[RMDB]
RNA sequence: GGGAACGACUCGAGUAGAGUCGAAAAGAUAUGGAGGCAAGACAUGAGUCCUGGGUCGGAAACGACCCGUCACUCAACAGCUUGCUCCUAAGUCAAAGAAUCCACACUGUUCGCAGUGUGGAUUCAAGUGAUAUGCGUGGUUCGCCACGCAUAUCACAAAAGAAACAACAACAACAAC
Reactivity to DMS in 0.01 (KOAc 150mM, MgCl2 10mM, bicine 150mM(pH8.5), 24C), signal-to-noise 2, nucleotides 027 to 126: g010a120u000a300u010g000g000a060g040g010c000a000a000g020a010c080a270u000g000a000g000u000c110c020u000g030g020g040u000c000g010g020a130a080a210c010g020a020c010c000c000g000u000c050a010c000u010c010a040a060c210a130g000c010u000u000g000c000u000c000c010u000a040a200g000u000c040a080a110a220g010a010a000u000c000c000a000c000a000c000u000g000u000u010c300g040c010a020g020u000g000u010g010g000a000u000u000c000a040a070
Reactivity to 2A3 in 0.01 (KOAc 150mM, MgCl2 10mM, bicine 150mM(pH8.5), 24C), signal-to-noise 1, nucleotides 027 to 126: g050a030u110a090u130g040g000a030g160g190c020a010a000g060a110c130a220u070g010a000g030u050c050c020u040g000g000g010u010c010g030g000a110a040a050c000g010a010c000c070c000g000u000c010a000c000u010c010a070a060c000a080g070c000u000u000g000c000u000c000c000u050a160a050g040u030c050a200a020a000g000a020a010u000c000c000a000c000a010c000u030g050u110u170c300g040c170a010g020u030g000u000g010g000a000u000u000c000a000a000